[RMDB]
RNA sequence: GGGAACGACUCGAGUAGAGUCGAAAAGGCCGUUGCGGGUAAGCACCCAACAUAAGUACUGUGUCCAUUCUAAUGUACUGAUUAUACGCAAUGGUUCCAAGAGCUUGCUUGCCCAUGGCUGACUGGAAGACGAAUACAAGUUCGCUUGUAUUCGUCUAAAAGAAACAACAACAACAAC
Reactivity to DMS in 0.01 (KOAc 150mM, MgCl2 10mM, bicine 150mM(pH8.5), 24C), signal-to-noise 4, nucleotides 027 to 126: g000g000c000c000g030u010u020g020c020g010g010g020u000a030a060g000c150a080c070c030c060a120a110c190a120u020a040a040g010u000a020c020u020g010u000g010u010c140c110a070u030u000c070u020a070a070u010g010u010a010c030u000g000a080u000u010a090u020a060c040g010c020a030a030u000g000g000u000u000c040c020a040a080g010a140g000c120u040u010g010c010u000u010g030c010c030c040a150u040g000g010c040u000g010a110c020u000g000g000a300
Reactivity to 2A3 in 0.01 (KOAc 150mM, MgCl2 10mM, bicine 150mM(pH8.5), 24C), signal-to-noise 6, nucleotides 027 to 126: g050g000c000c010g040u050u160g100c100g010g000g000u010a010a010g010c010a080c020c030c020a080a070c070a140u220a060a030g040u050a100c040u100g040u060g050u170c100c010a100u130u030c040u180a170a130u170g030u080a070c030u030g020a060u090u180a090u060a110c020g000c050a040a020u030g020g000u090u060c020c000a120a010g030a010g100c030u070u080g020c000u010u030g000c050c010c010a010u110g000g000c020u040g060a090c010u010g010g030a040
The record gives the reactivity of an RNA of 177 nucleotides to DMS and 2A3. Source: RMDB library OK1LIB, as collected in RNAgym. The DMS profile rests on 7,799 reads. Conditions: 150 mM KOAc, 10 mM MgCl2 and 150 mM bicine (pH 8.5), 24 C.